[RMDB]
RNA sequence: GGGAACGACUCGAGUAGAGUCGAAAAUUGAUGGCUGGCCUGAUAUAAGGCUGGCGCACCGUAUCGGUGUCCCUGAGCAGACCGGCGGGACGAUUCUUUCAUGGCGGGGCCUGUGCAUACCCCGUUUUCCUAUCUUACAGUUCGCUGUAAGAUAGGAAAAAGAAACAACAACAACAAC
Reactivity to 2A3 in 0.01 (KOAc 150mM, MgCl2 10mM, bicine 150mM(pH8.5), 24C), signal-to-noise 3, nucleotides 027 to 126: u080u130g020a000u080g120g000c000u000g000g000c010c000u080g030a040u030a040u070a300a020g000g010c010u010g030g000c010g020c000a020c000c000g000u110a100u300c060g010g000u030g010u020c010c050c000u030g040a050g020c040a010g120a060c000c000g000g020c000g000g000g060a020c060g100a090u100u080c020u040u200u080c120a070u190g120g000c010g010g030g020g000c050c040u200g060u110g100c030a030u120a110c000c010c000c010g000u040u020u030
Reactivity to DMS in 0.01 (KOAc 150mM, MgCl2 10mM, bicine 150mM(pH8.5), 24C), signal-to-noise 2, nucleotides 027 to 126: u040u050g000a130u020g000g020c020u010g010g020c000c010u000g000a220u060a090u030a120a050g000g020c000u010g030g000c010g010c060a060c010c040g020u010a050u020c030g030g020u010g000u020c030c010c030u030g020a160g000c110a090g010a070c020c010g000g000c040g010g030g010a120c160g000a090u000u000c000u000u000u000c080a100u050g000g030c020g000g000g020g030c050c070u000g000u000g030c140a130u030a210c010c010c000c030g000u000u000u010
Record summary: An RNA of 177 nucleotides, treated with 2A3 and DMS and read out base by base. For 2A3 the reverse transcriptase was SuperScript II with manganese. Conditions: 150 mM KOAc, 10 mM MgCl2 and 150 mM bicine (pH 8.5), 24 C. Source: RMDB libraries RFM100 and RFMREP, as collected in RNAgym.